[RMDB]
RNA sequence: GGGAACGACUCGAGUAGAGUCGAAAAGAUAUGGAUAAAUCUUUAGGGAGAAGGGUGUCGGAAACGACACGAUUCUUCGACGAUCUAAAGAGUUUAUCCUAAGUCAAAACAACGCUUCGGCGUUGAAGCUCCUAUCUAUGUUCGCAUAGAUAGGAGCAAAAGAAACAACAACAACAAC
Reactivity to DMS in 0.01 (KOAc 150mM, MgCl2 10mM, bicine 150mM(pH8.5), 24C), signal-to-noise 2, nucleotides 027 to 126: g000a040u000a300u000g000g000a020u000a000a020a030u000c000u000u000u000a000g000g020g010a020g000a030a030g000g010g010u000g000u020c020g030g010a190a070a210c010g000a040c010a020c000g000a090u010u020c000u000u000c010g010a050c280g020a060u030c040u000a000a020a010g000a030g000u000u000u010a010u000c000c000u020a020a090g020u010c060a110a110a210a260c000a010a030c010g000c010u010u010c260g030g030c010g010u000u000g010a060a150
Reactivity to 2A3 in 0.01 (KOAc 150mM, MgCl2 10mM, bicine 150mM(pH8.5), 24C), signal-to-noise 2, nucleotides 027 to 126: g010a010u060a030u180g000g000a000u020a040a110a030u010c000u010u040u010a000g000g000g020a030g000a020a010g020g050g030u010g000u000c010g020g040a080a070a040c010g010a000c010a010c050g120a270u130u080c020u010u000c010g100a150c020g010a020u000c020u040a000a000a000g000a000g090u020u040u000a000u000c010c000u000a110a000g040u010c040a010a020a110a150c010a000a020c010g000c010u050u090c300g230g000c040g000u000u010g010a020a030